[RMDB]
RNA sequence: GGGAACGACUCGAGUAGAGUCGAAAAGCUCUCCAGCAGGAGCAAGAGCGAAGACAUGUGAGGGGCACCAGCAUCACUUGUCGAUUAGCAGCUUGACGUGGAGCACCAGCAACGUCUUGCUGCGAAAGGGUAGCUUGUCGUUCGCGACGAGCUACCCAAAAGAAACAACAACAACAAC
Reactivity to DMS in 0.01 (KOAc 150mM, MgCl2 10mM, bicine 150mM(pH8.5), 24C), signal-to-noise 2, nucleotides 027 to 126: g000c000u000c010u000c040c020a170g010c120a110g000g000a070g000c070a010a060g000a050g050c030g010a120a040g000a000c030a050u010g000u000g000a030g020g000g000g010c000a010c100c040a100g010c070a190u000c000a020c000u010u000g010u010c010g000a190u060u000a160g000c010a010g000c000u000u010g000a010c000g000u000g010g000a150g030c030a090c070c140a090g030c010a200a040c030g000u020c000u000u000g010c000u030g050c000g000a000a050a080
Reactivity to 2A3 in 0.01 (KOAc 150mM, MgCl2 10mM, bicine 150mM(pH8.5), 24C), signal-to-noise 3, nucleotides 027 to 126: g000c000u000c000u000c000c050a040g020c020a020g040g070a050g020c020a020a040g030a000g030c050g070a090a020g020a030c020a020u050g020u010g030a040g070g020g020g000c040a010c020c010a010g030c020a070u010c000a010c000u030u040g010u020c010g010a050u000u070a000g000c000a000g010c010u000u010g000a000c000g000u010g040g150a110g040c000a040c080c010a000g010c010a030a000c000g000u000c000u000u000g000c000u000g000c000g010a030a010a000

The record gives the reactivity of an RNA of 177 nucleotides to DMS and 2A3. It was measured as part of the RMDB library OK1LIB. For DMS the reverse transcriptase was MarathonRT. The reactions ran in a buffer of 150 mM KOAc, 10 mM MgCl2 and 150 mM bicine (pH 8.5), at 24 C. The DMS profile rests on 3,681 reads. For 2A3 the reverse transcriptase was SuperScript II with manganese. The 2A3 profile rests on 4,182 reads.